About this RNA
This 177-nucleotide RNA was probed chemically with DMS and 2A3. The DMS profile rests on 41,330 reads.
RNA sequence: GGGAACGACUCGAGUAGAGUCGAAAAAAUGGGAAGAAGCAGGUAUUAUUCCUCUUUAGGGUGCCAUCAGACUGCUUUCAGCAGAGUUAUUAAGGCUGUGACUGAUCAGAUGUCCCCUCGCUGCUGACUAGUGUUAAGAAUUCGUUCUUAACACUAGAAAAGAAACAACAACAACAAC
Reactivity to DMS in 0.01 (KOAc 150mM, MgCl2 10mM, bicine 150mM(pH8.5), 24C), signal-to-noise 9, nucleotides 027 to 126: a060a040u000g010g000g010a110a090g010a120a050g010c040a020g010g010u000a070u010u010a150u000u000c010c010u000c190u000u000u000a050g010g010g010u000g010c040c020a030u000c030a070g010a060c030u000g000c130u000u000u000c030a020g010c010a060g010a100g000u000u010a120u010u010a110a130g000g010c010u000g010u000g010a040c020u000g000a120u000c050a060g010a060u000g000u000c020c010c000c030u000c200g010c030u000g010c020u000g010a200
Reactivity to 2A3 in 0.01 (KOAc 150mM, MgCl2 10mM, bicine 150mM(pH8.5), 24C), signal-to-noise 9, nucleotides 027 to 126: a000a010u200g040g000g020a080a100g030a040a000g040c040a010g050g000u060a060u180u060a040u110u080c010c000u060c030u080u070u100a040g000g000g020u060g020c010c000a020u020c010a010g040a060c010u020g050c000u020u040u030c010a000g000c010a010g040a030g190u130u080a180u170u170a170a040g100g000c010u010g010u030g080a060c010u020g030a270u030c020a020g010a040u020g030u030c010c000c030c000u010c030g060c020u050g000c000u010g020a030